[RMDB]
RNA sequence: GGGAACGACUCGAGUAGAGUCGAAAAGCAGUCGACUUCGGUCGACUGCAAAGAAUCACCACCAGCAGGUGAAAGCUGGAGGCAAAGAGCGAAAAUAAAUAAAAACGCUGAGCUUCGGCUCAGCGAACUACGGUAAUCGAUUCGUCGAUUACCGUAGAAAAGAAACAACAACAACAAC
Reactivity to DMS in 0.01 (KOAc 150mM, MgCl2 10mM, bicine 150mM(pH8.5), 24C), signal-to-noise 1, nucleotides 027 to 126: g020c000a000g010u000c000g000a000c010u020u010c230g020g050u000c000g020a000c000u000g000c000a020a020a090g000a100a050u000c020a120c000c020a120c020c020a030g010c010a110g000g040u000g000a060a070a110g010c000u000g010g000a010g040g000c110a010a060a090g000a070g040c060g020a130a010a080a080u000a060a090a020u040a040a060a040a110a110c000g000c000u000g000a040g010c000u000u010c170g000g000c010u000c000a010g060c000g000a000a020
Reactivity to 2A3 in 0.01 (KOAc 150mM, MgCl2 10mM, bicine 150mM(pH8.5), 24C), signal-to-noise 2, nucleotides 027 to 126: g000c000a010g000u020c010g000a010c030u140u140c280g090g000u000c000g010a000c000u020g000c010a010a010a000g000a000a050u060c030a010c060c000a020c000c010a010g010c020a010g170g120u210g230a130a000a010g010c000u000g000g000a040g050g000c050a160a150a050g070a070g040c070g120a110a060a010a050u230a020a110a000u180a060a120a060a010a010c010g000c000u000g000a000g000c020u010u080c290g050g000c000u020c020a010g000c000g010a000a000
An RNA of 177 nucleotides, treated with DMS and 2A3 and read out base by base.
Source: RMDB library M2PK50, as collected in RNAgym.
2A3 adducts were read by reverse transcription with SuperScript II with manganese.
Conditions: 150 mM KOAc, 10 mM MgCl2 and 150 mM bicine (pH 8.5), 24 C.